[RMDB]
RNA sequence: GGGAACGACUCGAGUAGAGUCGAAAAGCCGCGUGCUACGAGAUUCCUGACGAAGAGUUCGGCGCGCUGGUGGGCCUGGCCGUGGUCGCAUCGGCAGAGCUUGACGAGUCGGCAGCCCGGGCGCUCAGAUGCAUGCCGAAUUCGUUCGGCAUGCAUCAAAAGAAACAACAACAACAAC
Reactivity to DMS in 0.01 (KOAc 150mM, MgCl2 10mM, bicine 150mM(pH8.5), 24C), signal-to-noise 1, nucleotides 027 to 126: g090c000c020g050c090g030u050g010c060u050a060c100g000a150g030a000u020u000c070c010u000g050a120c180g050a070a060g000a080g030u000u000c020g030g020c020g000c080g070c000u010g060g050u000g000g000g000c010c000u070g050g010c070c050g060u030g030g010u000c050g110c120a060u000c120g000g000c040a030g000a230g000c070u050u000g030a080c000g000a040g000u020c000g000g000c040a010g000c200c000c000g000g010g020c040g010c020u000c030a130
Reactivity to 2A3 in 0.01 (KOAc 150mM, MgCl2 10mM, bicine 150mM(pH8.5), 24C), signal-to-noise 3, nucleotides 027 to 126: g020c000c010g100c020g030u100g000c000u050a100c040g010a010g070a130u060u040c020c070u100g060a090c050g040a050a050g030a000g100u050u050c040g020g000c020g000c010g000c090u090g030g050u050g040g040g000c010c050u060g070g030c050c040g240u150g000g040u080c080g010c090a070u030c020g020g030c050a030g020a020g080c060u090u110g040a030c010g040a040g070u020c000g000g000c030a040g030c030c030c010g000g000g000c050g020c020u080c050a010
The data come from the RNA Mapping Database (RMDB), library OK1LIB. This 177-nucleotide RNA was probed chemically with DMS and 2A3. 2A3 is a SHAPE reagent: it acylates the 2'-hydroxyl of flexible nucleotides of all four kinds. The DMS profile rests on 1,564 reads. The RNA was probed in 150 mM KOAc, 10 mM MgCl2 and 150 mM bicine (pH 8.5) at 24 C.